[RMDB]
RNA sequence: GGGAACGACUCGAGUAGAGUCGAAAAAGCCGAGGAGUACGGUCCUCGGCAACAACCGUCACAACGGCUUCCUGGCGUGACGGGGUUAACCCCAACGGAGCAAGUGCGAGCUUACGAGCUCGCACAAUUUAGGAGAAUUCCUUCGGGAAUUCUCCAACAAUAGUGUUCGGUUCGCCGAACACUAUUGAAAAGAAACAACAACAACAAC
Reactivity to 2A3 in 0.01 (KOAc 150mM, MgCl2 10mM, bicine 150mM(pH8.5), 24C), signal-to-noise 2, nucleotides 027 to 156: a020g010c000c010g010a000g000g010a000g000u300a120c080g090g180u040c000c000u010c000g010g000c000a000a010c000a000a010c000c000g000u000c000a000c000a050a000c050g050g000c020u220u210c050c000u050g070g000c010g000u020g000a000c000g000g040g000g000u080u130a040a040c000c000c000c000a070a060c110g010g020a010g060c030a220a120g030u000g030c030g000a030g030c000u090u110a080c190g100a030g030c000u000c000g000c000a000c000a000a030u000u030u120a050g000g000a010g010a000a000u000u020c000c020u040u090c200g050g000g000a000a000u020u010c000u000c000c000a000a000